[RMDB]
RNA sequence: GGGAACGACUCGAGUAGAGUCGAAAAACGAUAGCGUACGCGCUAUCGAAAUGGGGGAAACCCCAUACUCCUCACACACUAAAUCGCCCGAUUAUUCGGGCUUUACAUAGCCUUACGAGGCUAUGAACUCUGUCGUGCGUUUCGACGCACGACAGAGAAAAGAAACAACAACAACAAC
Reactivity to 2A3 in 0.01 (KOAc 150mM, MgCl2 10mM, bicine 150mM(pH8.5), 24C), signal-to-noise 1, nucleotides 027 to 126: a030c000g010a010u050a000g000c000g000u050a010c250g000c010g000c110u000a000u000c000g000a000a000a050u060g010g000g000g000g000a020a020a100c000c000c000c000a000u000a000c010u000c010c000u120c000a070c000a000c020a060c190u190a060a060a050u270c030g010c020c020c000g000a010u070u040a090u230u290c000g000g010g070c000u000u050u000a020c000a030u000a000g000c000c000u010u000a040c300g090a040g000g000c000u000a000u000g000a000a050